[RMDB]
RNA sequence: GGGAACGACUCGAGUAGAGUCGAAAAUAUUGUUCUUUCACUUAUUCAGAACAUUACAUGCCUUCAAAAUGGGAUUGUACUAUACCAGUAAGUGCCACUUCUGUGUCUUUCUAAUGGAAAUGAGUAGCGCGCUGAAGAGAUUCGUCUCUUCAGCGCGAAAAGAAACAACAACAACAAC
Reactivity to 2A3 in 0.01 (KOAc 150mM, MgCl2 10mM, bicine 150mM(pH8.5), 24C), signal-to-noise 1, nucleotides 027 to 126: u270a000u050u000g000u100u080c000u000u020u000c120a190c000u000u220a110u300u260c110a000g000a050a000c000a000u030u030a010c000a040u120g060c000c000u080u300c070a000a110a000a000u100g000g000g000a000u000u020g030u070a000c000u110a090u000a110c000c000a000g060u020a020a040g020u020g070c050c040a000c080u010u000c020u000g160u010g050u020c020u040u010u000c000u000a020a020u000g010g000a070a070a070u020g000a000g000u070a120g080
Source information
Source: RMDB library OK1LIB, as collected in RNAgym. An RNA of 177 nucleotides, treated with 2A3 and read out base by base. For 2A3 the reverse transcriptase was SuperScript II with manganese. Conditions: 150 mM KOAc, 10 mM MgCl2 and 150 mM bicine (pH 8.5), 24 C. Reactivities are rounded to 0.1 and cut off at 0 and 3. For 2A3, 370 sequencing reads were counted.